[RMDB]
RNA sequence: GGGAACGACUCGAGUAGAGUCGAAAAUCUUAUUGAGCAGCUCACCGGUGACACAAAUGACGGGGCAUUCACACAGCAGAGCAGCCCACGGGCCGGGCGAGGGACAGCCCUUGCGUACGUCCAGAAGGACGAAUCUACUUUUCGAAGUAGAUUCGUCAAAAGAAACAACAACAACAAC
Reactivity to DMS in 0.01 (KOAc 150mM, MgCl2 10mM, bicine 150mM(pH8.5), 24C), signal-to-noise 4, nucleotides 027 to 126: u000c030u010u000a130u010u000g010a110g030c060a060g020c050u000c040a100c060c030g030g010u010g000a110c100a090c130a060a080a070u000g000a160c120g010g000g010g000c050a040u010u000c090a060c080a050c100a040g010c060a060g000a120g020c080a110g020c010c010c010a140c150g000g020g020c000c030g010g010g000c020g010a040g010g000g000a130c260a120g000c020c010c020u010u000g010c050g020u000a090c220g000u010c010c020a110g010a110a090g020
Reactivity to 2A3 in 0.01 (KOAc 150mM, MgCl2 10mM, bicine 150mM(pH8.5), 24C), signal-to-noise 3, nucleotides 027 to 126: u020c020u030u100a110u140u150g030a040g020c020a010g020c000u030c020a030c040c010g080g030u050g040a060c020a000c010a120a150a140u170g050a070c060g030g000g040g000c030a030u070u060c010a020c000a010c040a050g020c020a010g030a010g080c020a010g010c000c000c010a040c040g010g000g020c020c020g040g040g000c020g000a030g020g030g010a050c030a090g300c000c000c000u020u000g020c020g030u070a040c020g000u000c000c020a020g060a070a040g190